Overview: Conditions: 150 mM KOAc, 10 mM MgCl2 and 150 mM bicine (pH 8.5), 24 C. The record gives the reactivity of an RNA of 177 nucleotides to 2A3 and DMS. DMS adducts were read by reverse transcription with MarathonRT. For DMS, 5,337 sequencing reads were counted. Source: RMDB library OK1LIB, as collected in RNAgym. 2A3 adducts were read by reverse transcription with SuperScript II with manganese.
[RMDB]
RNA sequence: GGGAACGACUCGAGUAGAGUCGAAAAACGCCGUCUCGUCGUGCCGCAGCGCGGCAGAGCUGCGCGUUAUCGAGGGCGUGCUGCGGCAGCACGAGCGGAGAGUGCUCGCCAGCGGCUCUGCCGCCACCAGGGUGCAUAAUUUCGAUUAUGCACCCUGAAAAGAAACAACAACAACAAC
Reactivity to 2A3 in 0.01 (KOAc 150mM, MgCl2 10mM, bicine 150mM(pH8.5), 24C), signal-to-noise 7, nucleotides 027 to 126: a000c030g010c020c000g140u160c000u000c020g030u020c060g060u020g010c000c000g000c010a010g010c000g020c010g130g050c030a020g030a020g010c040u110g010c040g030c060g090u080u090a150u190c050g020a090g070g110g070c030g030u040g000c000u010g000c010g010g000c010a040g080c040a000c000g000a010g000c000g020g000a020g040a010g010u090g040c030u030c040g090c030c040a030g000c000g010g000c020u040c110u300g000c010c000g020c010c000a040c060
Reactivity to DMS in 0.01 (KOAc 150mM, MgCl2 10mM, bicine 150mM(pH8.5), 24C), signal-to-noise 2, nucleotides 027 to 126: a030c020g000c000c000g000u040c000u000c000g000u000c080g080u030g000c020c030g000c010a010g010c170g030c010g000g040c050a070g030a080g000c010u010g000c040g010c110g010u030u020a070u020c100g000a090g020g000g000c060g010u000g000c000u020g000c020g000g030c000a060g000c090a030c000g010a010g000c030g030g000a060g000a130g000u010g010c010u000c060g010c150c100a150g000c010g000g030c000u090c050u020g020c000c030g010c030c220a040c140